[RMDB]
RNA sequence: GGGAACGACUCGAGUAGAGUCGAAAAGUGCAGAUUGAAAUUCAUGGGAGCCUCUCCAUAAUGGAUGAACGCCGCGGUAGUACGCGCAGUCGCGACGUAAACGCUCUGUAUUCCCGUUCAGGCCUCACACUAGUAGGGCGUUCGCGCCCUACUAGUGAAAAGAAACAACAACAACAAC
Reactivity to DMS in 0.01 (KOAc 150mM, MgCl2 10mM, bicine 150mM(pH8.5), 24C), signal-to-noise 1, nucleotides 027 to 126: g020u000g020c020a000g030a080u000u000g020a120a090a070u000u000c080a050u000g000g020g010a110g020c150c090u020c070u000c000c030a070u000a080a040u000g020g000a010u000g010a100a030c010g020c010c000g030c010g000g000u010a090g000u000a040c120g000c060g000c080a200g010u000c060g000c020g020a000c010g010u010a040a060a140c060g020c040u020c000u010g010u000a140u000u000c000c000c010g000u000u010c110a060g010g000c030c080u000c120a190
Description: Conditions: 150 mM KOAc, 10 mM MgCl2 and 150 mM bicine (pH 8.5), 24 C. This 177-nucleotide RNA was probed chemically with DMS. Source: RMDB library OK2TRN, as collected in RNAgym. The DMS profile rests on 979 reads. Reactivities are given for positions 27 through 126.